[RMDB]
RNA sequence: GGGAACGACUCGAGUAGAGUCGAAAAACAGGGAAUUCACCUUGCAUGAAUUUACCAGCUGUCAAAUGUGCGCCUUCACGAAUUUGUUCGAUAAAGAUACGUUGGUCACCGUGAAUAAUUUCACCAGAGUGCAUUACGUUUUCGAACGUAAUGCACUAAAAGAAACAACAACAACAAC
Reactivity to DMS in 0.01 (KOAc 150mM, MgCl2 10mM, bicine 150mM(pH8.5), 24C), signal-to-noise 3, nucleotides 027 to 126: a170c050a040g000g000g000a050a020u000u000c020a080c050c050u010u040g000c120a150u020g000a050a050u010u000u000a110c020c040a090g000c010u050g020u050c030a090a010a080u040g000u020g010c030g000c010c040u000u000c090a050c040g000a080a060u020u000u000g010u020u010c050g020a110u020a050a030a070g000a060u020a030c130g000u000u000g000g020u020c070a040c040c030g000u000g000a010a070u010a080a150u010u000u000c030a070c020c140a150g020
Reactivity to 2A3 in 0.01 (KOAc 150mM, MgCl2 10mM, bicine 150mM(pH8.5), 24C), signal-to-noise 5, nucleotides 027 to 126: a000c030a000g030g020g040a020a040u050u040c040a040c070c010u040u150g100c060a080u090g040a060a050u040u050u110a210c020c010a020g030c040u030g030u060c030a070a060a110u140g030u030g040c010g020c000c010u030u130c040a050c040g080a080a090u100u020u170g060u070u030c010g000a040u070a100a070a050g080a020u070a080c080g000u010u030g000g020u020c010a020c050c020g020u030g050a010a060u210a130a110u010u070u080c100a130c040c020a030g040
An RNA of 177 nucleotides, treated with DMS and 2A3 and read out base by base. The reactions ran in a buffer of 150 mM KOAc, 10 mM MgCl2 and 150 mM bicine (pH 8.5), at 24 C. For DMS, 4,248 sequencing reads were counted. For 2A3 the reverse transcriptase was SuperScript II with manganese.